[RMDB]
RNA sequence: GGGAACGACUCGAGUAGAGUCGAAAAAUCUUCUGCUACAUGCCAGGCACUGCAGUAAGUGUGCUAUCCAUGAGGUCCAUUCUCUUCUUAUUUGAAGCUGAGGAAACUGAAAGCAUGGCUUGCCUGAGCUCACUUAAAGAUUCGUCUUUAAGUGAGCAAAAGAAACAACAACAACAAC
Reactivity to DMS in 0.01 (KOAc 150mM, MgCl2 10mM, bicine 150mM(pH8.5), 24C), signal-to-noise 7, nucleotides 027 to 126: a060u010c020u000u000c020u000g010c020u000a090c130a080u000g020c060c030a050g010g020c020a060c110u010g010c040a080g010u000a040a070g020u000g010u000g000c030u000a070u010c060c040a070u000g010a180g010g000u000c020c050a180u020u000c030u000c020u000u010c020u000u000a180u010u010u000g010a040a030g010c130u000g010a070g000g000a110a110a040c030u010g000a080a060a090g010c050a050u000g010g010c110u000u000g010c010c010u000g010a170
Reactivity to 2A3 in 0.01 (KOAc 150mM, MgCl2 10mM, bicine 150mM(pH8.5), 24C), signal-to-noise 7, nucleotides 027 to 126: a000u030c030u080u010c010u030g050c010u050a080c060a130u140g020c030c010a010g000g000c010a020c070u060g000c010a040g050u170a130a030g040u060g020u030g080c010u040a050u010c030c020a040u070g070a020g010g040u000c030c010a050u100u010c020u000c000u050u000c030u110u190a300u230u210u140g060a030a010g000c100u040g010a010g010g030a050a090a050c020u030g040a120a040a000g030c010a020u060g050g020c040u020u030g010c000c010u020g020a020